Description: The data come from the RNA Mapping Database (RMDB), library OK1LIB. Chemical mapping of a 177-nucleotide RNA with DMS and 2A3. The reactions ran in a buffer of 150 mM KOAc, 10 mM MgCl2 and 150 mM bicine (pH 8.5), at 24 C. In probing experiments dimethyl sulfate is read out at A N1 and C N3, which are open when not base-paired.

RNA sequence: GGGAACGACUCGAGUAGAGUCGAAAACAUGGUACUGCGUUAGAAUCAAUUCUCUUUCCUUGAGGUUUGGAUGAGGAGCGUCUAUUUAGGGAAGUAACGGAAGUCGUAGUUCAUCUCUCUAACGUUAGGGUUAUUCUAUCUUCGGAUAGAAUAACCCAAAAGAAACAACAACAACAAC
Reactivity to DMS in 0.01 (KOAc 150mM, MgCl2 10mM, bicine 150mM(pH8.5), 24C), signal-to-noise 2, nucleotides 027 to 126: c150a060u000g020g020u000a050c090u020g000c010g020u000u000a030g010a120a110u020c040a010a080u030u000c000u000c000u010u020u050c060c040u030u010g000a030g020g020u000u000u000g000g000a010u020g000a040g000g020a050g000c050g000u030c000u000a040u010u020u010a040g020g000g000a030a090g020u000a100a060c190g000g000a030a050g000u000c060g010u000a050g000u000u000c070a080u000c060u000c070u010c030u000a070a030c010g000u000u020a110
Reactivity to 2A3 in 0.01 (KOAc 150mM, MgCl2 10mM, bicine 150mM(pH8.5), 24C), signal-to-noise 3, nucleotides 027 to 126: c040a060u130g060g030u140a030c020u030g020c020g020u020u040a020g090a030a060u040c020a020a040u080u000c010u000c000u020u010u030c010c040u030u030g060a100g030g000u060u090u100g080g000a050u060g010a020g030g080a080g030c000g010u020c010u070a150u040u120u110a010g000g010g030a010a040g000u100a070a010c070g040g060a060a010g010u020c010g020u020a060g040u020u030c020a060u000c030u020c020u000c000u020a070a030c020g080u010u230a070